[RMDB]
RNA sequence: GGGAACGACUCGAGUAGAGUCGAAAACCGUAGGAUAAUUCUCUAGCGUGUCUGAUGACCAUGGCCGACGUCUAUUCGAAAGAGUAGACGGGGCCAUGCAAGGAUCGGGAUUAUCCUAAACGGAAAACAUGCAGUUUACUUCGGUAAACUGCAUGAACCAGUCAAACGUCUUCGGACGUUUGACUGGAAAAGAAACAACAACAACAAC
Reactivity to 2A3 in 0.01 (KOAc 150mM, MgCl2 10mM, bicine 150mM(pH8.5), 24C), signal-to-noise 1, nucleotides 027 to 156: c010c010g030u040a020g010g010a000u000a060a040u170u040c090u050c100u210a210g220c040g160u240g020u160c060u150g100a300u160g040a060c040c020a010u000g000g000c000c000g050a300c000g060u050c000u000a000u000u000c000g080a240a030a010g000a070g000u000a020g000a010c010g000g010g000g000c000c000a000u000g000c000a010a080g080g040a010u020c010g000g000g010a000u000u000a010u080c010c010u020a080a020a000c020g020g000a000a260a040a000c010a020u000g000c010a000g060u000u000u000a020c040u050u150c240g070g000u000a000a000a000c000u010g000c000a000u000g000a000a010

Conditions: 150 mM KOAc, 10 mM MgCl2 and 150 mM bicine (pH 8.5), 24 C.
This 207-nucleotide RNA was probed chemically with 2A3.
2A3 adducts were read by reverse transcription with SuperScript II with manganese.